[RMDB]
Source information
Structure probing data (2A3 and DMS) for a 177-nucleotide construct. 2A3 adducts were read by reverse transcription with SuperScript II with manganese. Conditions: 150 mM KOAc, 10 mM MgCl2 and 150 mM bicine (pH 8.5), 24 C. Source: RMDB library TTRDES, as collected in RNAgym. DMS adducts were read by reverse transcription with MarathonRT.
RNA sequence: GGGAACGACUCGAGUAGAGUCGAAAAAAGAUAUGGACUUAAGACAUGCUCUGGAGGACACUUGGAUUUACGCUCGGAAACGAGCGUUGUCAGUGUUGAAGGAGCAACAGCUUAAGUCCUAAGUCAACCGUAAAAAUUACUUCGGUAAUUUUUACGGAAAAGAAACAACAACAACAAC
Reactivity to 2A3 in 0.01 (KOAc 150mM, MgCl2 10mM, bicine 150mM(pH8.5), 24C), signal-to-noise 2, nucleotides 027 to 126: a000a010g080a040u090a080u130g000g010a000c000u010u000a010a010g040a080c020a140u070g000c000u030c020u010g100g000a110g170g240a000c000a000c010u080u230g190g000a050u300u290u250a030c000g000c010u000c000g010g030a040a090a050c000g000a020g010c020g010u000u000g010u000c000a000g000u000g010u040u090g010a010a000g030g000a010g020c000a000a010c000a000g000c000u000u000a000a000g000u000c020c000u000a100a010g020u010c040a030a080
Reactivity to DMS in 0.01 (KOAc 150mM, MgCl2 10mM, bicine 150mM(pH8.5), 24C), signal-to-noise 3, nucleotides 027 to 126: a020a110g000a020u010a300u000g000g000a030c020u000u010a010a010g000a070c100a200u010g020c000u000c010u000g040g010a290g000g010a010c000a010c010u020u030g060g030a040u010u000u000a010c000g020c000u000c020g000g000a110a100a170c000g000a010g010c000g020u000u000g000u000c000a020g010u000g010u000u010g030a300a260g000g000a000g020c010a000a060c170a180g000c020u010u010a000a020g000u000c030c010u010a010a090g010u000c040a120a180